[RMDB]
RNA sequence: GGGAACGACUCGAGUAGAGUCGAAAACAGCAGGGCUGGUCCGACAUCGCCCUUUGGCGCAGACUACAGCAGCGUCCUGCGCUCCACCCUCCUUGUGAAUGCGCAGUACUGCUCUUCAGUGCCUGCCAAGCUCAGAGCAAUUCGUUGCUCUGAGCUUAAAAGAAACAACAACAACAAC
Reactivity to DMS in 0.01 (KOAc 150mM, MgCl2 10mM, bicine 150mM(pH8.5), 24C), signal-to-noise 3, nucleotides 027 to 126: c090a110g020c030a040g010g000g030c020u000g000g000u000c030c060g000a120c170a110u010c040g010c010c010c300u000u010u010g030g030c020g010c140a050g000a050c050u000a090c120a010g030c070a040g000c040g000u000c140c020u010g000c030g000c000u000c050c010a020c010c230c120u010c140c110u000u000g020u010g000a010a040u010g010c010g020c000a020g000u000a040c020u010g010c060u000c060u000u000c170a030g030u010g010c040c000u000g000c010c140
Reactivity to 2A3 in 0.01 (KOAc 150mM, MgCl2 10mM, bicine 150mM(pH8.5), 24C), signal-to-noise 2, nucleotides 027 to 126: c020a000g080c020a010g020g000g030c010u030g040g050u020c040c030g040a060c070a130u100c040g020c010c000c000u040u060u150g000g050c020g020c020a010g020a050c060u150a090c250a060g080c020a000g010c010g070u050c000c010u010g010c010g030c030u030c030c010a060c030c030c000u140c030c000u070u080g040u000g040a120a010u100g010c000g060c000a000g060u040a000c030u110g020c020u010c000u110u060c020a050g100u090g150c000c010u010g000c010c010
Background: Conditions: 150 mM KOAc, 10 mM MgCl2 and 150 mM bicine (pH 8.5), 24 C. This 177-nucleotide RNA was probed chemically with DMS and 2A3. For 2A3 the reverse transcriptase was SuperScript II with manganese. For DMS, 2,725 sequencing reads were counted. Source: RMDB library OK2TRN, as collected in RNAgym.